[RMDB]
RNA sequence: GGGAACGACUCGAGUAGAGUCGAAAAGCAAAGUCUGUGGAACUGAGCAGUCAGACAGGGGUGAAAACCGAUUAUCGCGGCUAUGCUAUUGUGCCUUACAUCAGUCCUUACCGUAAAAAUAAGAUAGCGAUCCUCAUCAAUUCGUUGAUGAGGAUCGAAAAGAAACAACAACAACAAC
Reactivity to DMS in 0.01 (KOAc 150mM, MgCl2 10mM, bicine 150mM(pH8.5), 24C), signal-to-noise 2, nucleotides 027 to 126: g020c070a100a090a100g000u010c030u000g040u000g070g000a100a120c060u010g000a140g010c120a080g000u000c050a010g010a110c060a110g000g000g000g000u010g000a090a070a120a100c030c030g020a120u000u010a070u020c100g010c080g050g010c040u000a070u000g000c040u000a060u000u000g010u010g000c020c000u020u010a050c100a040u000c030a020g020u000c010c020u000u000a120c050c050g020u010a000a040a080a080a060u010a090a140g000a100u010a030g010
Reactivity to 2A3 in 0.01 (KOAc 150mM, MgCl2 10mM, bicine 150mM(pH8.5), 24C), signal-to-noise 2, nucleotides 027 to 126: g000c010a020a020a030g030u020c070u080g060u120g060g010a080a110c010u030g010a030g080c060a040g090u050c010a010g020a050c010a050g110g000g000g000u100g080a080a000a020a020c010c010g010a040u080u070a110u130c030g000c020g030g000c000u020a010u080g000c040u070a070u100u050g050u090g030c010c010u020u020a020c020a120u010c000a010g020u020c000c020u060u150a050c020c020g060u060a030a030a040a050a100u200a050a080g100a070u100a040g060